[RMDB]
This 177-nucleotide RNA was probed chemically with 2A3 and DMS.
Conditions: 150 mM KOAc, 10 mM MgCl2 and 150 mM bicine (pH 8.5), 24 C.
Reactivities are rounded to 0.1 and cut off at 0 and 3.
For DMS the reverse transcriptase was MarathonRT.
The DMS profile rests on 4,370 reads.

RNA sequence: GGGAACGACUCGAGUAGAGUCGAAAAGAAGAGAAUAGCGGUGUAAGUGCAGCCCGUCUUACACCGUAAGGCACAGCGGAAACGCUGAUGUCAAAUACAGGGCUGCGAGACGGAAGUAGACCGUCAACACCUAUGAUCGAUUCGUCGAUCAUAGGUGAAAAGAAACAACAACAACAAC
Reactivity to 2A3 in 0.01 (KOAc 150mM, MgCl2 10mM, bicine 150mM(pH8.5), 24C), signal-to-noise 6, nucleotides 027 to 126: g150a040a010g130a000g050a060a140u140a090g000c010g000g000u000g000u010a010a020g000u030g070c020a000g010c000c010c000g030u020c010u000u000a000c000a010c000c000g000u030a020a040g010g000c000a000c000a000g010c000g030g020a090a070a010c010g000c000u010g010a100u000g000u000c000a000a020a010u220a010c060a030g000g000g000c010u000g000c030g020a140g000a000c000g040g000a180a070g070u180a050g080a070c000c000g000u000c010a000a010
Reactivity to DMS in 0.01 (KOAc 150mM, MgCl2 10mM, bicine 150mM(pH8.5), 24C), signal-to-noise 3, nucleotides 027 to 126: g000a180a100g000a090g020a150a120u080a230g020c000g010g000u000g000u000a000a020g020u000g040c000a010g010c020c010c000g000u030c010u000u000a000c010a010c030c010g000u000a030a060g000g000c000a000c000a010g020c000g010g030a130a110a190c020g030c020u000g000a030u010g030u020c000a030a140a110u030a070c150a130g000g000g000c010u000g000c030g020a140g010a000c000g020g000a130a110g040u040a070g000a150c040c010g000u010c010a070a160